[RMDB]
RNA sequence: GGGAACGACUCGAGUAGAGUCGAAAAGACGAUGGCCUCGGGCGACGUGUCCGCGUACAUCGGCUCGUCGGACAUCGCGAUGCUCUAUUCGGUGGCGGACAUCGCCGGCCUGAACCGGAUCUCGCGACGUGAUUACCUGCUUCGGCAGGUAAUCACGAAAAGAAACAACAACAACAAC
Reactivity to 2A3 in 0.01 (KOAc 150mM, MgCl2 10mM, bicine 150mM(pH8.5), 24C), signal-to-noise 2, nucleotides 027 to 126: g010a020c020g010a010u060g020g000c020c060u070c080g030g010g010c060g010a090c110g080u090g020u060c030c010g020c030g030u090a090c020a010u030c000g000g030c030u010c030g130u080c040g020g120a180c110a210u170c080g000c010g120a040u160g020c020u000c050u150a200u080u070c060g000g000u030g020g000c050g030g020a060c050a110u130c020g000c040c000g040g020c000c020u000g020a000a010c060c080g020g030a060u000c060u000c030g040c060g060a080
Reactivity to DMS in 0.01 (KOAc 150mM, MgCl2 10mM, bicine 150mM(pH8.5), 24C), signal-to-noise 1, nucleotides 027 to 126: g000a070c040g010a090u000g000g010c040c060u000c040g020g020g010c000g010a050c110g020u010g010u000c000c010g010c070g000u000a270c020a020u000c040g010g020c040u000c060g010u010c090g000g030a120c180a100u000c020g000c030g030a010u010g000c040u000c120u000a180u000u010c050g010g040u010g010g000c010g000g000a140c060a060u000c060g000c040c010g000g050c120c010u000g000a130a070c030c100g000g040a070u000c020u010c030g000c020g010a110
Structure probing data (2A3 and DMS) for a 177-nucleotide construct. The reactions ran in a buffer of 150 mM KOAc, 10 mM MgCl2 and 150 mM bicine (pH 8.5), at 24 C. For 2A3 the reverse transcriptase was SuperScript II with manganese.